[RMDB]
Chemical mapping of a 177-nucleotide RNA with DMS. The data come from the RNA Mapping Database (RMDB), library TTRDES. The RNA was probed in 150 mM KOAc, 10 mM MgCl2 and 150 mM bicine (pH 8.5) at 24 C.
RNA sequence: GGGAACGACUCGAGUAGAGUCGAAAAAAGAUAUGGAGGUCAGGGAGAAAUUGUGACACGAAGAACAACCCUCGGAAACGAGGGUUGGGAGUGUCAUGAUUUCGAAGAACUGACCUCCUAAGUCAAAGUGCUUUACAUUGUUCGCAAUGUAAAGCACAAAAGAAACAACAACAACAAC
Reactivity to DMS in 0.01 (KOAc 150mM, MgCl2 10mM, bicine 150mM(pH8.5), 24C), signal-to-noise 1, nucleotides 027 to 126: a170a050g000a040u020a300u000g020g000a000g020g020u000c000a000g030g020g000a180g050a010a000a000u000u020g040u000g010a000c010a000c000g000a130a210g000a070a230c000a000a010c020c000c010u000c010g000g000a120a080a130c050g010a010g000g040g000u000u000g000g000g000a120g000u010g010u010c000a000u010g020a000u000u010u000c020g040a140a150g010a150a160c000u000g010a000c010c000u010c070c010u000a010a050g000u000c100a080a190a170